[RMDB]
RNA sequence: GGGAACGACUCGAGUAGAGUCGAAAAGUGGGAUGUGCGUCUCACCUGAAGAGGACAAAAGUCCGAAACAGUAUUAGUCUUUAUUUCUAGCUGAAAGUGUGAAGUCAGAAGAAGUUUCUUCGGACUGCUAGUAGCUUUGGUUCGCCAAAGCUACUAGAAAAGAAACAACAACAACAAC
Reactivity to 2A3 in 0.01 (KOAc 150mM, MgCl2 10mM, bicine 150mM(pH8.5), 24C), signal-to-noise 2, nucleotides 027 to 126: g080u040g010g000g010a010u030g120u160g290c130g070u050c000u010c020a040c000c000u020g020a100a000g030a010g110g000a000c020a030a300a060a030g020u040c000c010g070a050a050a030c020a000g080u090a150u050u060a040g020u000c030u020u140u020a100u040u140u000c020u020a070g050c010u010g110a140a130a070g090u110g060u080g170a100a040g020u020c060a010g020a020a000g010a040a120g090u150u250u000c050u000u020c010g050g010a010c010u050g000
Reactivity to DMS in 0.01 (KOAc 150mM, MgCl2 10mM, bicine 150mM(pH8.5), 24C), signal-to-noise 2, nucleotides 027 to 126: g030u010g010g010g010a030u000g030u010g060c120g000u000c000u000c020a050c040c030u000g000a100a040g010a300g000g000a020c040a070a120a150a130g030u000c000c000g010a170a150a050c050a010g010u010a110u000u010a060g000u000c030u000u000u010a090u010u000u000c050u000a080g030c060u000g000a070a040a100g000u000g000u010g010a110a040g000u000c000a000g000a010a020g000a060a260g000u010u000u010c010u010u000c010g000g010a020c020u000g000